This 177-nucleotide RNA was probed chemically with 2A3 and DMS. 2A3 adducts were read by reverse transcription with SuperScript II with manganese.
RNA sequence: GGGAACGACUCGAGUAGAGUCGAAAAAGCACCAUUACGAUGGUGCAAACCCGUCCCGUUCGUCCCCGGACGUUGCUCUCUACCCCGGGAACGUCGAGACUGGAGCAGCGUGGUUACGACCACGCAAUAUAAACUCGUUGUUCGCAACGAGUUUAUAAAAAGAAACAACAACAACAAC
Reactivity to 2A3 in 0.01 (KOAc 150mM, MgCl2 10mM, bicine 150mM(pH8.5), 24C), signal-to-noise 6, nucleotides 027 to 126: a000g000c000a000c010c000a000u030u040a080c250g090a010u010g000g000u000g000c010a000a030a010c000c000c000g010u010c000c000c000g030u080u080c000g000u020c010c000c000c000g020g000a060c040g070u060u090g040c050u030c010u030c060u200a030c000c000c000c030g010g010g010a010a010c020g010u000c010g010a020g010a030c070u140g070g030a070g080c210a020g000c020g010u010g000g020u050u070a080c190g050a010c050c000a000c000g000c000a000a000
Reactivity to DMS in 0.01 (KOAc 150mM, MgCl2 10mM, bicine 150mM(pH8.5), 24C), signal-to-noise 5, nucleotides 027 to 126: a050g000c000a000c000c000a010u010u030a100c170g020a030u000g000g030u000g010c010a000a030a040c020c000c000g020u000c000c030c000g000u030u000c000g020u000c020c000c010c000g000g010a050c280g010u000u010g010c120u020c070u020c050u000a240c070c060c020c010g010g000g010a050a010c000g010u000c020g000a080g000a020c010u030g010g030a140g010c170a120g010c000g030u010g000g000u010u020a110c170g000a090c010c000a000c000g000c010a020a030